[RMDB]
RNA sequence: GGGAACGACUCGAGUAGAGUCGAAAAUGAUAAUGGGGAUAGUGUCUCCGCCGAUUUCGAAGGGGAGCCACCUGAACGUAACGAGGAAGCUUCAAAUACCCUUGAUGACGAGAGUGUCAGAUUAGCUCGUCAGGCUGUGACAAGAUCAAAGGAAAGGCGCCAAGAAGUGGUUCGCCACUUCUUGGCGAAAAGAAACAACAACAACAAC
Reactivity to 2A3 in 0.01 (KOAc 150mM, MgCl2 10mM, bicine 150mM(pH8.5), 24C), signal-to-noise 1, nucleotides 027 to 156: u060g010a010u110a210a110u130g030g000g070g020a040u030a060g080u060g030u020c010u080c040c010g020c010c000g120a060u130u110u080c110g000a100a000g000g000g020g010a000g000c000c020a000c000c010u000g030a020a010c080g000u150a030a030c060g000a030g000g000a070a020g040c040u060u040c080a100a010a100u120a050c000c020c000u000u030g070a020u020g010a030c050g000a000g020a020g190u130g100u190c010a000g010a210u070u060a030g030c000u000c030g060u000c040a030g090g010c050u080g030u050g040a010c040a040a030g010a050u070c120a120a000a000g060g020a030a020a030g060g060

An RNA of 207 nucleotides, treated with 2A3 and read out base by base. As a SHAPE reagent, 2A3 marks flexible, mostly unpaired nucleotides at the ribose 2'-OH. Source: RMDB library OK3TST, as collected in RNAgym.